Notes:
Conditions: 150 mM KOAc, 10 mM MgCl2 and 150 mM bicine (pH 8.5), 24 C. The record gives the reactivity of an RNA of 177 nucleotides to 2A3 and DMS. For 2A3, 2,806 sequencing reads were counted.
RNA sequence: GGGAACGACUCGAGUAGAGUCGAAAAGAUAUGGACCGUUAUGAACUACUGCCCGGAUCGGAAACGAUCCGGAAGCAGCAUACGGUCCUAAGUCAAACCACAGACGUGGGUUCGCCCACGUCUGUGGCGUGAUACAUGCGUUCGCGCAUGUAUCACGAAAAGAAACAACAACAACAAC
Reactivity to 2A3 in 0.01 (KOAc 150mM, MgCl2 10mM, bicine 150mM(pH8.5), 24C), signal-to-noise 1, nucleotides 027 to 126: g030a000u060a020u140g020g040a010c010c000g000u260u140a010u060g060a130a100c130u300a100c070u300g000c000c000c000g000g000a000u010c000g020g000a080a060a000c020g000a010u040c000c010g010g000a010a040g000c000a010g020c000a010u010a010c010g020g000u000c000c000u030a020a000g020u000c000a000a080a130c020c010a000c000a030g010a000c000g000u040g010g050g000u040u080c300g170c050c020c000a010c000g010u020c000u000g000u000g010g000
Reactivity to DMS in 0.01 (KOAc 150mM, MgCl2 10mM, bicine 150mM(pH8.5), 24C), signal-to-noise 1, nucleotides 027 to 126: g000a030u000a300u000g010g040a040c000c000g000u010u010a030u000g000a100a080c170u030a300c040u000g000c080c020c000g000g000a000u000c000g010g000a090a090a190c020g000a010u000c000c000g010g000a040a020g020c010a010g000c020a000u000a010c000g000g000u000c000c000u000a010a030g050u000c020a120a110a300c000c000a030c000a010g000a000c000g030u030g020g000g040u000u040c260g000c010c010c000a000c000g010u000c000u000g040u000g000g010
Notes
Source: RMDB library TTRDES, as collected in RNAgym.